[RMDB]
RNA sequence: GGGAACGACUCGAGUAGAGUCGAAAAUUCGGCCUAGGUCGGACUCCGAUGGGAACGGCAACGGUUGUUCCGUUUGACUUGUCGCCCGCUACGGCGUGAGCGUCAAGGUCUGUUGAGUGCAAUCGUAGGACGUCAUUAGUGGCGAACCCGAUACCGACUAUAGCGUGGUGUUCGCACCACGCUAUAGAAAAGAAACAACAACAACAAC
Reactivity to 2A3 in 0.01 (KOAc 150mM, MgCl2 10mM, bicine 150mM(pH8.5), 24C), signal-to-noise 1, nucleotides 027 to 156: u050u010c000g050g000c010c010u080a080g000g000u000c030g050g030a170c030u040c050c070g130a280u280g090g070g060a140a030c000g030g020c030a050a010c000g090g010u010u010g030u050u140c050c030g000u130u050u110g000a020c000u000u000g010u000c010g000c020c040c000g000c040u050a010c300g140g020c020g030u150g030a080g020c000g000u030c000a000a000g120g080u020c000u000g100u090u200g060a080g040u100g010c040a010a010u000c000g020u080a120g000g040a050c020g020u020c000a020u090u130a010g160u050g060g000c040g000a100a150c000c000c000g010a030u010a040c000c040g000a000
Source information
The data come from the RNA Mapping Database (RMDB), library PDB130. This 207-nucleotide RNA was probed chemically with 2A3. For 2A3, 624 sequencing reads were counted. 2A3 adducts were read by reverse transcription with SuperScript II with manganese.